Chemical mapping of a 177-nucleotide RNA with 2A3 and DMS.
[RMDB]
RNA sequence: GGGAACGACUCGAGUAGAGUCGAAAAGUAAAUAAAGCGCACCAAUAUGGAGGUGCGCAACCAGCCUGACCUAGGAACACGCAUCCACGCGUCUCCUAAGACGCGAAAGGUAUUCCAAAUAAAAAAAGAUUAACAAGGUGUUCGCACCUUGUUAAUCAAAAGAAACAACAACAACAAC
Reactivity to 2A3 in 0.01 (KOAc 150mM, MgCl2 10mM, bicine 150mM(pH8.5), 24C), signal-to-noise 1, nucleotides 027 to 126: g010u060a000a100a210u100a070a180a000g000c000g000c000a000c000c000a040a020u240a190u300g170g000a090g020g050u000g000c000g000c000a000a000c010c000a020g040c020c020u030g020a060c000c050u080a090g030g000a000a000c030a020c110g080c030a080u060c030c000a060c040g000c010g020u000c010u080c020c020u050a140a050g000a020c010g010c020g090a130a020a000g050g010u040a050u000u030c020c000a080a110a020u190a110a090a010a010a000a000a000
Reactivity to DMS in 0.01 (KOAc 150mM, MgCl2 10mM, bicine 150mM(pH8.5), 24C), signal-to-noise 1, nucleotides 027 to 126: g000u010a130a080a200u000a050a070a160g000c000g000c000a010c000c000a120a100u010a210u000g030g010a300g040g010u000g000c010g000c010a000a010c040c100a190g000c000c050u010g000a050c130c050u000a040g020g030a030a120c090a010c070g050c080a170u010c010c080a130c000g000c000g000u000c010u030c190c120u000a250a060g010a010c080g000c000g000a000a140a020g020g000u000a070u000u000c040c000a060a050a100u000a010a030a110a040a040a150a110
Notes: For 2A3, 1,083 sequencing reads were counted. For 2A3 the reverse transcriptase was SuperScript II with manganese.